RNA sequence: GGGAACGACUCGAGUAGAGUCGAAAACAUGGCAGGGAGCCUAUAGUGAGCUUUAUUUUACGGACACCUUAUGGCCUGAUUUUGACGAAGCGGCCUUGCAGGAAGCUAUUCUUGCCUAUAAUCGUCGUACCCCGCUAGCGUUCGCGCUAGCGGGGUAAAAAGAAACAACAACAACAAC
Reactivity to 2A3 in 0.01 (KOAc 150mM, MgCl2 10mM, bicine 150mM(pH8.5), 24C), signal-to-noise 2, nucleotides 027 to 126: c000a010u030g000g000c020a020g000g020g000a030g000c000c070u200a260u020a030g110u060g120a030g030c050u000u210u240a090u020u100u250u040a180c060g030g070a000c050a060c030c000u140u200a070u140g130g000c070c000u140g170a300u060u000u040u300g000a000c040g030a000a000g000c000g060g000c000c040u000u000g000c070a010g050g000a040a000g000c000u000a000u080u030c000u000u000g000c010c000u150a150u090a040a070u000c000g000u030c020g000